RNA sequence: GGGAACGACUCGAGUAGAGUCGAAAAGGGAGCGGAAGUGUGGAUACGCGAGGGGACCCGGGUACGAAUAAGCCGAAACACACGAAUAAGGCGAAUAUACAUAGAAGUACCGAAUGUAUAUGAAGAAGGGUAAUCUAUUGUUCGCAAUAGAUUACCCAAAAGAAACAACAACAACAAC
Reactivity to 2A3 in 0.01 (KOAc 150mM, MgCl2 10mM, bicine 150mM(pH8.5), 24C), signal-to-noise 3, nucleotides 027 to 126: g050g020g020a010g000c020g010g000a060a000g020u010g030u050g120g020a050u030a130c000g000c000g020a080g000g000g010g010a000c000c000c000g020g000g020u000a030c030g050a050a190u140a110a000g000c010c000g010a030a070a040c140a000c000a000c030g010a040a060u090a050a100g030g000c020g000a010a020u020a000u030a010c010a000u070a010g130a140a010g140u030a090c030c020g010a030a020u050g000u060a010u010a030u060g110a030a170g080a050a030
Reactivity to DMS in 0.01 (KOAc 150mM, MgCl2 10mM, bicine 150mM(pH8.5), 24C), signal-to-noise 4, nucleotides 027 to 126: g000g010g020a040g010c020g000g020a030a050g010u010g020u000g000g000a070u000a070c130g000c100g010a110g000g010g000g010a110c030c010c090g000g010g000u020a010c060g000a100a090u020a050a200g000c010c010g010a080a080a110c110a090c100a060c100g000a100a050u050a060a120g000g000c040g010a120a020u000a030u020a000c030a040u000a070g000a120a110g010u010a060c050c020g000a060a020u010g000u000a020u000a020u010g000a070a070g020a080a140
Background: An RNA of 177 nucleotides, treated with 2A3 and DMS and read out base by base. For 2A3 the reverse transcriptase was SuperScript II with manganese. The RNA was probed in 150 mM KOAc, 10 mM MgCl2 and 150 mM bicine (pH 8.5) at 24 C. For DMS the reverse transcriptase was MarathonRT.